RNA sequence: GGGAACGACUCGAGUAGAGUCGAAAAGAUCACCUGUUCGCAGGUGAUCAAUCUCCCACUUGAUCGAAGUCUCACAGCCUCGUUGCCCACGACGCACGGGCGUAUUGAUCCGCUUCGGCGGAUCAAAGCAUUUGAUUAUGUUCGCAUAAUCAAAUGCAAAAGAAACAACAACAACAAC
Reactivity to 2A3 in 0.01 (KOAc 150mM, MgCl2 10mM, bicine 150mM(pH8.5), 24C), signal-to-noise 6, nucleotides 027 to 126: g000a000u000c000a000c010c000u010g030u050u060c260g010c100a000g000g000u000g010a000u000c000a000a000u010c010u000c000c010c010a040c040u080u210g060a120u100c070g090a120a030g130u030c030u020c070a100c030a050g020c000c010u140c080g070u100u110g010c020c010c010a120c080g120a040c040g020c020a010c020g030g010g000c020g000u030a040u030u060g000a000u000c000c000g000c010u040u060c220g120g000c010g000g000a010u000c000a000a010a000
Reactivity to DMS in 0.01 (KOAc 150mM, MgCl2 10mM, bicine 150mM(pH8.5), 24C), signal-to-noise 7, nucleotides 027 to 126: g000a010u000c000a010c000c000u000g010u000u010c200g030c010a010g010g020u000g010a000u000c010a030a100u010c190u000c010c000c010a130c120u000u000g000a060u000c060g010a090a100g000u010c020u000c050a110c170a110g000c020c010u000c040g010u000u000g010c010c040c060a150c190g010a080c220g010c080a060c100g000g000g010c030g000u000a030u000u000g000a010u000c000c000g000c010u000u010c190g010g010c000g000g000a000u000c000a000a030a120
This 177-nucleotide RNA was probed chemically with 2A3 and DMS. The RNA was probed in 150 mM KOAc, 10 mM MgCl2 and 150 mM bicine (pH 8.5) at 24 C. For 2A3 the reverse transcriptase was SuperScript II with manganese. For 2A3, 16,759 sequencing reads were counted. Source: RMDB library M2PK50, as collected in RNAgym.